Structure probing data (2A3 and DMS) for a 177-nucleotide construct. The reactions ran in a buffer of 150 mM KOAc, 10 mM MgCl2 and 150 mM bicine (pH 8.5), at 24 C. Values cover nucleotides 27 to 126. For 2A3 the reverse transcriptase was SuperScript II with manganese. Source: RMDB library OK2TST, as collected in RNAgym.
RNA sequence: GGGAACGACUCGAGUAGAGUCGAAAAUGUUUGCUACCAUGCUUUGUCCCUACAAACACAGUCAUGGAGAAGGCCAGUGGCAGAGCCUGAGCCGUUCGCGCAUCUGUUCACCAGUAUCCAGAAUAACCGAAUACGAAAGGUUCGCCUUUCGUAUUCGAAAAGAAACAACAACAACAAC
Reactivity to 2A3 in 0.01 (KOAc 150mM, MgCl2 10mM, bicine 150mM(pH8.5), 24C), signal-to-noise 4, nucleotides 027 to 126: u050g050u040u050u060g020c000u020a060c000c030a050u080g020c000u140u080u090g060u080c020c020c010u050a080c120a060a160a010c040a010c030a090g090u110c010a070u060g030g020a050g030a060a010g060g030c020c040a050g020u060g080g030c030a020g010a030g110c010c030u010g020a010g020c040c040g040u090u070c070g000c000g020c040a060u010c030u040g050u080u090c030a050c070c000a030g040u060a060u060c020c020a040g070a180a050u150a090a050c030
Reactivity to DMS in 0.01 (KOAc 150mM, MgCl2 10mM, bicine 150mM(pH8.5), 24C), signal-to-noise 4, nucleotides 027 to 126: u010g010u000u000u010g000c060u000a100c030c040a060u010g010c020u000u000u000g020u000c030c020c040u000a120c160a080a100a060c100a080c150a070g000u010c090a040u010g000g010a120g010a100a070g000g000c020c090a080g030u010g000g010c020a020g010a100g020c040c030u010g000a070g010c020c020g010u000u000c050g030c070g020c080a070u000c060u000g000u000u000c050a070c030c040a080g010u000a090u010c070c030a090g000a070a060u000a070a150c180